[RMDB]
RNA sequence: GGGAACGACUCGAGUAGAGUCGAAAAAGACUAACGCUAAGACUGAGCUUCUACGUAUAUAUAUUCGUAUAUUACAAGAUCCAACUCUAACGAUCUAUGGUUCUAGAGUUAUCUUGGUCUUGCAGGCUGAAUUAUACGUGUUCGCACGUAUAAUUCAAAAAGAAACAACAACAACAAC
Reactivity to DMS in 0.01 (KOAc 150mM, MgCl2 10mM, bicine 150mM(pH8.5), 24C), signal-to-noise 8, nucleotides 027 to 126: a060g010a160c080u010a080a120c170g010c020u010a020a010g010a040c020u000g000a030g010c300u000u000c010u000a100c130g010u010a020u010a010u000a020u000a070u010u010c120g010u000a010u000a010u010u000a030c010a110a030g000a020u010c190c150a020a020c010u000c010u010a010a060c250g010a030u000c100u020a120u010g020g010u000u010c060u000a020g000a030g010u000u000a090u000c040u000u000g010g000u010c010u000u000g010c040a090g010g000c150
Reactivity to 2A3 in 0.01 (KOAc 150mM, MgCl2 10mM, bicine 150mM(pH8.5), 24C), signal-to-noise 7, nucleotides 027 to 126: a000g090a040c050u080a140a010c090g010c070u080a010a010g010a010c010u010g010a010g030c020u060u020c020u070a070c060g020u010a100u000a000u000a000u010a050u170u100c050g010u030a010u010a010u030u090a010c010a020a010g010a020u030c060c040a010a030c000u000c010u030a080a060c050g030a070u010c050u160a190u200g130g000u060u000c020u030a000g000a000g010u020u010a020u020c010u010u010g000g000u000c000u010u020g010c030a030g100g000c040